[RMDB]
RNA sequence: GGGAACGACUCGAGUAGAGUCGAAAAUGCCGCUAUGAAAAAAUUGAUUCAAGCCUCUAUCGGUACUAAAUAUGUCAUACAUUGGUCAGAGAAAAUGUGUGAAUUAGCUCUAGACGCUGUUAAGACAAGGUCAGCUAUUAUUCGUAAUAGCUGACCUAAAAGAAACAACAACAACAAC
Reactivity to 2A3 in 0.01 (KOAc 150mM, MgCl2 10mM, bicine 150mM(pH8.5), 24C), signal-to-noise 3, nucleotides 027 to 126: u100g030c000c000g000c060u100a090u230g140a070a000a040a030a000a140u170u300g080a120u100u150c040a050a000g050c000c000u020c010u090a040u100c010g010g020u000a050c010u050a010a120a180u210a070u230g080u040c010a020u010a070c010a020u010u070g120g000u080c050a020g050a000g010a130a140a000a000u020g040u000g000u000g020a030a030u030u020a010g010c020u010c000u010a030g010a020c020g000c020u000g050u040u130a080a040g010a020c020a050
Reactivity to DMS in 0.01 (KOAc 150mM, MgCl2 10mM, bicine 150mM(pH8.5), 24C), signal-to-noise 2, nucleotides 027 to 126: u020g000c020c000g000c140u000a090u010g000a010a070a070a050a140a060u050u000g000a090u010u010c060a100a160g010c040c040u000c020u000a060u000c080g020g020u010a080c150u040a030a040a100u010a020u030g000u000c010a050u000a040c030a030u000u020g000g000u030c080a010g000a060g020a040a090a070a000u010g030u060g000u030g060a050a010u000u020a060g000c000u000c010u000a030g000a050c080g000c080u000g000u000u030a060a110g000a050c040a030
The data come from the RNA Mapping Database (RMDB), library OK1LIB.
The record gives the reactivity of an RNA of 177 nucleotides to 2A3 and DMS.
Values are in units of 0.01, from 0 to 300, in steps of 10.
2A3 adducts were read by reverse transcription with SuperScript II with manganese.
The DMS profile rests on 2,313 reads.
Conditions: 150 mM KOAc, 10 mM MgCl2 and 150 mM bicine (pH 8.5), 24 C.